[RMDB]
RNA sequence: GGGAACGACUCGAGUAGAGUCGAAAAAGUAGAAAAUUGCGAAUCGGCCAUUCCAAUGGUAAGCAGUUAUUGAAAAAGUUAAAUGCAUUUGGUUAUACCGAAGCGGAUGUAAGGCAAGCUUUAGAAGCUAUACCAAGGGAUUCGUCCCUUGGUAUAGAAAAGAAACAACAACAACAAC
Reactivity to 2A3 in 0.01 (KOAc 150mM, MgCl2 10mM, bicine 150mM(pH8.5), 24C), signal-to-noise 6, nucleotides 027 to 126: a000g130u230a060g100a120a140a070a060u160u130g020c010g030a100a100u130c100g110g010c020c000a020u150u070c030c050a110a050u060g090g000u090a150a010g000c010a010g030u060u080a140u110u160g130a090a040a030a030a030g080u130u110a100a130a050u150g040c070a090u020u040u090g050g000u080u060a060u080a110c000c040g030a090a010g040c040g040g010a030u060g040u130a030a010g080g000c070a040a030g020c000u060u100u050a080g060a170a010g070
Reactivity to DMS in 0.01 (KOAc 150mM, MgCl2 10mM, bicine 150mM(pH8.5), 24C), signal-to-noise 7, nucleotides 027 to 126: a070g000u010a100g000a040a050a060a040u000u010g020c020g000a150a080u030c130g010g010c040c040a090u000u050c130c120a080a070u010g020g010u000a090a160g010c020a020g010u000u010a060u010u010g000a100a050a080a090a070g000u010u010a050a070a070u010g000c040a050u000u010u010g020g000u000u030a090u010a180c050c030g000a020a060g010c050g010g000a030u000g000u010a050a070g000g000c090a070a070g000c060u010u000u010a070g000a090a110g010